Structure probing data (2A3) for a 207-nucleotide construct. For 2A3, 663 sequencing reads were counted. The data come from the RNA Mapping Database (RMDB), library OK3TST.
[RMDB]
RNA sequence: GGGAACGACUCGAGUAGAGUCGAAAAGUAUAAAAUUGAUGCUUGUAUGCUUCGUAUUCUUAAGUCUAAAACCGCUGGUCAAGCUCGACAAAUUCAAGUUAUUGCUGAUAGACUUAUCCGUAGUCGUUCAGGUGGCAGAUACGUCCUUCUUAAGGAACUGACGGUAGAAGUUCGCUUCUACCGUCAGAAAAGAAACAACAACAACAAC
Reactivity to 2A3 in 0.01 (KOAc 150mM, MgCl2 10mM, bicine 150mM(pH8.5), 24C), signal-to-noise 2, nucleotides 027 to 156: g050u010a020u060a090a060a120a110u060u040g000a010u080g020c030u070u080g020u140a050u110g020c020u050u020c020g100u050a170u200u070c040u160u230a110a060g030u000c020u070a050a080a080a080c100c030g010c030u030g020g110u070c010a030a020g010c030u030c040g090a060c040a040a040a060u120u050c020a040a070g040u050u060a040u040u090g000c010u020g060a160u080a080g010a010c000u050u010a040u000c000c010g020u010a010g010u000c010g020u000u040c000a020g000g020u050g030g000c020a010g020a000u030a140c040g040u070c000c000u000u000c040u060u040a090a050g110g020a100a110